[RMDB]
RNA sequence: GGGAACGACUCGAGUAGAGUCGAAAAGAUAUGGAUUCCAUAGGCGAAGAACGUAUUCACAUCGGAAACGAUGUGAGAUACGGGAGCCUAUGAGAAUCCUAAGUCAAAAGCACACUUCGGUGUGCAAUCCUACUGAGAACUUCGGUUCUCAGUAGGAAAAAGAAACAACAACAACAAC
Reactivity to 2A3 in 0.01 (KOAc 150mM, MgCl2 10mM, bicine 150mM(pH8.5), 24C), signal-to-noise 2, nucleotides 027 to 126: g030a010u050a060u180g000g010a000u000u000c020c010a010u000a000g030g000c040g210a300a040g020a300a110c020g010u020a010u030u060c030a000c020a020u000c010g020g000a060a070a030c000g010a010u010g000u000g030a060g020a010u000a000c020g040g000g010a020g000c000c000u010a010u000g020a020g000a020a010u000c000c000u000a080a030g000u000c030a040a000a100a160g020c010a000c000a000c000u090u160c300g110g000u010g010u010g000c010a010a000
Reactivity to DMS in 0.01 (KOAc 150mM, MgCl2 10mM, bicine 150mM(pH8.5), 24C), signal-to-noise 2, nucleotides 027 to 126: g020a040u010a300u000g020g020a000u000u000c000c000a010u000a000g010g030c000g020a170a180g000a250a200c000g010u010a010u000u000c000a000c000a000u000c000g000g000a100a130a210c000g000a010u000g000u010g000a020g000a030u000a000c010g000g000g000a100g000c000c000u000a000u000g000a080g000a010a000u000c010c000u010a000a110g010u000c020a120a100a170a200g000c000a010c000a010c000u000u020c200g030g010u000g010u000g010c010a010a040